Structure probing data (DMS and 2A3) for a 177-nucleotide construct. For DMS, 7,876 sequencing reads were counted. Reactivities are given for positions 27 through 126. For 2A3, 8,539 sequencing reads were counted. The RNA was probed in 150 mM KOAc, 10 mM MgCl2 and 150 mM bicine (pH 8.5) at 24 C. For 2A3 the reverse transcriptase was SuperScript II with manganese. For DMS the reverse transcriptase was MarathonRT.

[RMDB]
RNA sequence: GGGAACGACUCGAGUAGAGUCGAAAAUACGGCGGUUUACGGUUCGGUGAGGCUGUUGCCCUGCGGCGCAAGCAUGUGGGGGAUCGCGUGCUGACCGUCCGAUCGUCCCCUACGGCGGUGACCGGCACAGAAACAGUCAUUUCGAUGACUGUUUCUGAAAAGAAACAACAACAACAAC
Reactivity to DMS in 0.01 (KOAc 150mM, MgCl2 10mM, bicine 150mM(pH8.5), 24C), signal-to-noise 5, nucleotides 027 to 126: u010a070c080g010g000c020g010g000u010u000u010a040c040g000g000u000u010c030g020g030u000g000a090g020g020c000u010g030u000u000g010c010c010c000u000g000c010g000g000c010g000c290a100a120g030c000a030u010g040u010g010g010g010g010g000a020u000c220g010c030g010u000g000c020u010g000a050c040c010g000u010c050c040g010a050u000c020g010u000c050c020c010c050u010a070c040g010g000c020g000g020u010g000a120c020c010g010g000c250a210
Reactivity to 2A3 in 0.01 (KOAc 150mM, MgCl2 10mM, bicine 150mM(pH8.5), 24C), signal-to-noise 4, nucleotides 027 to 126: u250a030c060g000g010c010g010g030u080u120u110a010c010g020g000u060u180c030g040g010u050g080a080g120g070c050u070g110u070u140g220c010c000c000u020g000c010g030g000c010g000c040a080a070g000c030a140u130g000u020g000g020g000g010g030a020u060c030g000c100g040u090g010c000u020g020a020c000c000g010u010c020c020g030a090u080c010g030u040c000c010c000c010u060a070c020g030g000c040g120g160u100g030a180c010c000g010g000c040a020